[RMDB]
RNA sequence: GGGAACGACUCGAGUAGAGUCGAAAAGAAUGGCAGCAGAGUGCGGCCGCGGUCCGAGUACUUUUUUGUACGACCGUCGAGACCCCGACGGAGGGUCGGACCGAGCACUCCGGCCGCUGCCUAAGAAAGUACCUACCUAUUUCGAUAGGUAGGUACUAAAAGAAACAACAACAACAAC
Reactivity to DMS in 0.01 (KOAc 150mM, MgCl2 10mM, bicine 150mM(pH8.5), 24C), signal-to-noise 7, nucleotides 027 to 126: g010a120a100u010g010g020c000a020g020c050a170g010a070g010u000g010c040g000g020c120c130g010c020g010g010u000c000c020g020a090g000u000a010c000u000u000u000u010u010u000g010u010a010c010g010a090c000c000g000u000c010g000a200g000a160c060c050c030c010g000a020c010g000g010a120g010g010g020u000c010g000g000a010c000c020g010a170g000c060a030c070u000c100c140g010g000c100c070g010c010u000g010c000c000u010a080a090g010a090a090
Reactivity to 2A3 in 0.01 (KOAc 150mM, MgCl2 10mM, bicine 150mM(pH8.5), 24C), signal-to-noise 5, nucleotides 027 to 126: g090a060a130u090g010g000c000a030g000c030a020g070a040g180u090g060c030g040g070c080c070g040c000g030g000u010c010c010g010a010g010u000a030c010u060u260u280u080u250u210g000u010a020c020g020a040c030c000g000u000c000g000a050g040a090c010c020c000c000g000a010c010g020g020a040g080g120g080u020c000g000g000a000c000c000g010a020g000c010a020c050u010c010c030g060g020c020c040g000c010u000g000c000c000u010a040a020g070a060a180

Conditions: 150 mM KOAc, 10 mM MgCl2 and 150 mM bicine (pH 8.5), 24 C.
Structure probing data (DMS and 2A3) for a 177-nucleotide construct.